[RMDB]
RNA sequence: GGGAACGACUCGAGUAGAGUCGAAAAGCAUAUAUGCAUAUUCAUAUGCAUAUUUAUGUACGUACAUAUGAUUUACGUAUCUAUACACACUCUCAUUUCUGGGUUGUAUUAUACCCAGAAAUAUUAAGUGGCUUACCUGAAAUCAUAGAGUUGAUAAUAUUAAAUCACCUUUCGAGGUGAUUUAAUAAAAAGAAACAACAACAACAAC
Reactivity to 2A3 in 0.01 (KOAc 150mM, MgCl2 10mM, bicine 150mM(pH8.5), 24C), signal-to-noise 1, nucleotides 027 to 156: g020c020a000u020a000u000a000u080g000c000a000u040a040u080u240c040a110u070a000u120g010c000a000u000a020u040u070u040a050u040g010u000a000c000g000u010a000c020a180u080a040u070g010a030u040u000u010a000c010g000u020a000u000c060u040a060u050a030c070a000c000a020c050u070c010u010c080a020u010u000u000c030u000g000g020g020u020u000g070u030a110u240u110a060u100a000c010c020c000a010g000a000a000a000u010a000u040u100a110a050g020u000g030g000c000u030u040a080c010c000u030g110a040a050a010u000c000a030u010a020g100a010g120u130u120g090a060u240a300a300
Reactivity to DMS in 0.01 (KOAc 150mM, MgCl2 10mM, bicine 150mM(pH8.5), 24C), signal-to-noise 1, nucleotides 027 to 156: g000c000a050u020a060u010a000u010g000c000a020u010a040u000u010c140a150u010a010u000g000c010a010u010a010u000u000u000a000u000g000u000a130c100g000u000a110c070a150u000a010u010g010a030u000u010u010a060c070g000u000a040u000c040u020a110u000a250c180a170c010a030c000u000c040u000c140a030u010u010u000c020u000g030g000g060u000u010g000u010a140u010u000a080u020a040c040c010c020a030g010a000a000a010u000a030u000u010a020a070g040u010g020g010c060u000u000a010c010c040u010g010a060a080a040u010c010a030u010a020g000a200g030u000u000g030a090u010a090a230